[RMDB]
RNA sequence: GGGAACGACUCGAGUAGAGUCGAAAAUGGUGGCUCACCCUGUAAUCCCAGCCCUUUGCAAGGCCGAGGCGGGGCCUAUCACGAGGUCAGGAGAUUGAAACCAUCCUGGCUAACACGGUGAAACACCCGGUAAAAGUCAGUUCGCUGACUUUUACCGAAAAGAAACAACAACAACAAC
Reactivity to DMS in 0.01 (KOAc 150mM, MgCl2 10mM, bicine 150mM(pH8.5), 24C), signal-to-noise 2, nucleotides 027 to 126: u010g010g040u010g010g010c100u000c010a060c000c000c050u000g040u010a060a120u010c000c000c000a210g040c030c000c080u010u010u000g000c100a100a070g000g040c100c030g020a040g000g000c060g020g000g010g000c060c030u000a100u000c100a080c140g000a130g000g010u000c000a020g030g000a030g000a080u000u000g020a130a130a120c240c180a050u000c000c000u000g000g000c000u020a030a030c100a090c200g000g020u000g000a060a090a100c080a040c050c030
The record gives the reactivity of an RNA of 177 nucleotides to DMS. The DMS profile rests on 1,186 reads. It was measured as part of the RMDB library OK2TRN.